[RMDB]
The record gives the reactivity of an RNA of 177 nucleotides to 2A3.
RNA sequence: GGGAACGACUCGAGUAGAGUCGAAAAUGCAACAUUUGCCUGAGAAAUAUGCAGCCAUGUCAAUGGGCCAAGAAGACAUUCAGCCAGGCGAGCCAUGUUCCAUAUUUCAGAUGUGCAGCAUGCGCAAGCCGGUAGGUGGUUUCGACCACCUACCGGCAAAAGAAACAACAACAACAAC
Reactivity to 2A3 in 0.01 (KOAc 150mM, MgCl2 10mM, bicine 150mM(pH8.5), 24C), signal-to-noise 2, nucleotides 027 to 126: u090g000c030a010a110c140a270u120u140u200g050c000c020u020g000a100g000a040a160a000u070a040u180g000c000a000g000c000c050a040u000g020u130c050a010a080u090g070g010g000c030c030a130a030g030a070a000g140a120c140a080u130u180c000a030g060c010c000a000g010g020c000g010a000g030c000c000a000u010g010u000u000c000c000a020u010a020u000u040u120c060a110g000a240u090g070u150g000c060a000g000c020a000u080g020c050g000c110a120a030
About this RNA: The 2A3 profile rests on 702 reads. Source: RMDB library OK1LIB, as collected in RNAgym. The reactions ran in a buffer of 150 mM KOAc, 10 mM MgCl2 and 150 mM bicine (pH 8.5), at 24 C.